The record gives the reactivity of an RNA of 177 nucleotides to DMS. Values cover nucleotides 27 to 126. The reactions ran in a buffer of 150 mM KOAc, 10 mM MgCl2 and 150 mM bicine (pH 8.5), at 24 C.
[RMDB]
RNA sequence: GGGAACGACUCGAGUAGAGUCGAAAAGAUAUGGAGGUUAAUUGUAGUUGCUAUGUGGAGCACGCCAUUCGGAAACGAAUGGAGGUGCUAUGAAGCAUAGGCACUCUACAAUUAACCUCCUAAGUCACAUCAUGCCUAUGUUCGCAUAGGCAUGAUGAAAAGAAACAACAACAACAAC
Reactivity to DMS in 0.01 (KOAc 150mM, MgCl2 10mM, bicine 150mM(pH8.5), 24C), signal-to-noise 1, nucleotides 027 to 126: g000a030u000a300u000g000g010a010g010g000u010u000a000a000u000u000g000u000a000g000u000u010g000c010u000a020u000g010u000g000g020a010g020c000a060c000g000c000c000a010u000u010c000g000g000a120a130a220c000g010a000a000u000g010g030a050g020g030u000g000c000u000a120u010g000a120a300g000c010a000u000a020g010g000c000a020c300u000c000u010a020c010a000a010u000u000a000a010c000c000u000c000c000u000a000a030g000u000c030a300